[RMDB]
RNA sequence: GGGAACGACUCGAGUAGAGUCGAAAAUCUAUCACCAGCCCAUGUUUACGACACGAAUGGGCUGUUGCAAAUUACGAAUAGCUCUUGCAACAUCGUGUCGAAACGUUCCCAAGCUAUACGCCACAAAUUACAGCUAACCUUUCGAGGUUAGCUGUAAAAAAGAAACAACAACAACAAC
Reactivity to 2A3 in 0.01 (KOAc 150mM, MgCl2 10mM, bicine 150mM(pH8.5), 24C), signal-to-noise 2, nucleotides 027 to 126: u030c010u010a090u110c070a010c110c040a000g020c010c040c000a020u100g040u070u100u040a060c000g000a020c000a010c020g050a080a060u060g000g120g000c000u000g000u000u030g000c010a020a060a110u160u070a070c080g150a090a100u070a070g010c010u000c020u040u050g000c010a040a010c000a060u030c020g030u040g000u010c000g010a020a030a010c010g000u000u010c000c000c000a020a000g010c010u110a060u000a220c050g020c030c030a120c000a070a080a010
Reactivity to DMS in 0.01 (KOAc 150mM, MgCl2 10mM, bicine 150mM(pH8.5), 24C), signal-to-noise 3, nucleotides 027 to 126: u020c070u010a080u010c090a040c080c030a060g010c000c020c020a120u010g020u000u020u000a160c020g010a040c010a020c010g040a060a100u000g000g010g020c060u010g000u000u010g010c100a020a030a100u000u000a120c120g030a090a080u020a080g020c110u010c040u000u000g010c020a030a030c050a070u000c000g030u000g030u000c000g020a040a070a190c010g010u010u000c000c000c020a140a120g010c090u000a050u000a030c110g000c020c140a050c130a060a060a090

An RNA of 177 nucleotides, treated with 2A3 and DMS and read out base by base. For 2A3 the reverse transcriptase was SuperScript II with manganese. The RNA was probed in 150 mM KOAc, 10 mM MgCl2 and 150 mM bicine (pH 8.5) at 24 C.